[RMDB]
Structure probing data (2A3 and DMS) for a 177-nucleotide construct.
Source: RMDB libraries RFM100 and RFMREP, as collected in RNAgym.
Conditions: 150 mM KOAc, 10 mM MgCl2 and 150 mM bicine (pH 8.5), 24 C.
For DMS the reverse transcriptase was MarathonRT.
RNA sequence: GGGAACGACUCGAGUAGAGUCGAAAAGAAACUAUGUGAUGAUACCCCAAUGUCUGACCACUCCGUAGUAGGUCCAUGGUGUGUAAAUGAUGGACUGCGUAGUUUCAAGACGGGACUGAUGGCAGAAGAGUUGUGAUUAAUUCGUUAAUCACAACUCAAAAGAAACAACAACAACAAC
Reactivity to 2A3 in 0.01 (KOAc 150mM, MgCl2 10mM, bicine 150mM(pH8.5), 24C), signal-to-noise 9, nucleotides 027 to 126: g020a000a040a000c030u040a030u090g100u080g110a160u080g050a040u200a180c010c010c000c020a060a130u140g040u020c010u020g070a210c000c010a020c010u020c010c020g020u050a060g050u010a040g120g050u020c010c000a010u060g100g050u070g070u040g060u150a110a140a060u240g060a010u030g040g020a010c000u010g020c020g020u030a030g020u020u020u050c020a030a020g090a020c000g010g010g010a020c090u060g100a140u020g050g000c020a010g010a130a010
Reactivity to DMS in 0.01 (KOAc 150mM, MgCl2 10mM, bicine 150mM(pH8.5), 24C), signal-to-noise 9, nucleotides 027 to 126: g000a040a020a030c020u000a020u000g020u010g010a130u030g010a150u010a110c080c010c000c060a120a100u030g000u010c010u010g000a160c100c040a030c030u000c020c020g020u000a110g020u020a070g010g000u000c000c000a020u000g010g010u010g010u020g020u040a080a100a050u020g010a030u010g000g000a030c010u000g000c050g020u010a020g000u000u000u000c030a100a080g010a030c030g000g000g010a120c090u010g010a090u000g010g000c030a030g000a090a120